[RMDB]
RNA sequence: GGGAACGACUCGAGUAGAGUCGAAAAUUCGAUUAAUGGGAAUGUAUCAUAAUGAAUCGGUACAGAAAUUUUUGGUUUAAUAAAUUCAUUAAUAGCAUAACUUGCAUCAUCAAUACCCAUCGUAAAAAGUUUAUCUACGUUUCGACGUAGAUAAACUAAAAGAAACAACAACAACAAC
Reactivity to 2A3 in 0.01 (KOAc 150mM, MgCl2 10mM, bicine 150mM(pH8.5), 24C), signal-to-noise 1, nucleotides 027 to 126: u000u040c000g010a020u060u110a070a080u030g030g000g000a000a020u020g050u030a070u100c070a020u040a200a020u020g070a040a060u080c080g000g060u090a030c010a000g170a210a300a300u200u240u120u200u160g070g000u060u240u000a060a110u050a060a240a000u060u000c010a010u080u060a130a080u060a110g000c000a010u050a030a130c010u060u060g000c030a040u000c000a000u000c000a040a060u110a160c060c000c000a040u070c090g080u050a000a000a120a060
Reactivity to DMS in 0.01 (KOAc 150mM, MgCl2 10mM, bicine 150mM(pH8.5), 24C), signal-to-noise 1, nucleotides 027 to 126: u000u000c070g060a120u000u010a130a050u000g000g010g020a150a130u000g000u000a060u010c090a090u010a070a050u000g000a080a040u020c170g040g040u000a110c070a060g000a060a200a070u000u000u000u000u000g030g000u000u010u000a040a110u010a080a010a050u000u000c010a000u000u040a030a100u020a270g000c010a010u000a110a110c110u000u000g010c190a080u000c110a040u000c040a020a020u000a200c010c000c000a070u000c200g000u000a070a090a020a110
This 177-nucleotide RNA was probed chemically with 2A3 and DMS. Reactivities are given for positions 27 through 126. Conditions: 150 mM KOAc, 10 mM MgCl2 and 150 mM bicine (pH 8.5), 24 C. For 2A3, 610 sequencing reads were counted. High 2A3 reactivity points to a flexible backbone, as in loops and unpaired stretches. For DMS, 640 sequencing reads were counted.